An RNA of 177 nucleotides, treated with 2A3 and DMS and read out base by base.
The 2A3 profile rests on 3,869 reads.
The DMS profile rests on 2,413 reads.
[RMDB]
RNA sequence: GGGAACGACUCGAGUAGAGUCGAAAAGAUAUGGACCAAGAGCGAUAAGCUGAAUUCGGAAACGAAUUACCAGCUUUUGACGCUCGACGUCCUAAGUCAAAUCCCUGAUGGUUCGCCAUCAGGGAAACUAUGCAUUGGACUUCGGUCCAAUGCAUAGAAAAGAAACAACAACAACAAC
Reactivity to 2A3 in 0.01 (KOAc 150mM, MgCl2 10mM, bicine 150mM(pH8.5), 24C), signal-to-noise 2, nucleotides 027 to 126: g010a000u030a020u130g000g000a000c010c030a070a010g000a000g000c030g080a150u040a300a000g000c010u000g000a010a020u020u000c010g010g000a030a040a020c010g000a020a000u050u020a180c080c060a020g000c000u050u050u080u200g200a060c010g020c000u000c000g000a000c000g000u010c000c000u000a050a010g000u010c030a050a050a230u030c000c020c000u000g010a000u010g000g100u020u110c300g010c110c000a010u000c020a010g000g000g000a000a000a000
Reactivity to DMS in 0.01 (KOAc 150mM, MgCl2 10mM, bicine 150mM(pH8.5), 24C), signal-to-noise 3, nucleotides 027 to 126: g020a040u000a290u000g000g010a000c000c020a100a300g000a000g010c010g010a140u000a020a020g010c030u000g000a020a010u000u000c000g000g000a090a040a150c010g000a020a000u000u000a090c300c010a000g020c020u000u010u010u000g000a150c080g000c000u000c000g000a230c300g000u000c000c010u000a020a080g000u000c000a080a120a140u000c010c000c000u010g010a010u000g020g020u010u000c240g020c070c000a010u000c010a010g000g000g000a000a000a030